Chemical mapping of a 177-nucleotide RNA with 2A3. It was measured as part of the RMDB libraries RFM100 and RFMREP. The RNA was probed in 150 mM KOAc, 10 mM MgCl2 and 150 mM bicine (pH 8.5) at 24 C.

[RMDB]
RNA sequence: GGGAACGACUCGAGUAGAGUCGAAAAACUAAUCGAACAACCUAGUAGCUGGUUCCUUCCGAAGUUUCCCUCAGGAUAGCUGGAGCAGUAUUCUAGUUUCAUCUUGUAAAGACAAUGAUUAGCAGUUCCAUUAAGAGUGCUUCGGCACUCUUAAUGGAAAAGAAACAACAACAACAAC
Reactivity to 2A3 in 0.01 (KOAc 150mM, MgCl2 10mM, bicine 150mM(pH8.5), 24C), signal-to-noise 3, nucleotides 027 to 126: a000c050u080a090a040u040c030g050a030a030c030a000a030c070c000u000a030g010u050a010g030c040u050g110g000u050u010c000c000u060u090c010c020g040a010a060g010u000u050u020c000c010c020u010c090a040g010g000a040u040a080g060c030u050g030g000a030g030c030a010g040u070a150u080u050c020u000a000g010u010u110u150c040a040u050c000u020u050g080u170a040a080a060g040a020c030a070a100u120g010a060u070u070a000g020c020a010g100u030u020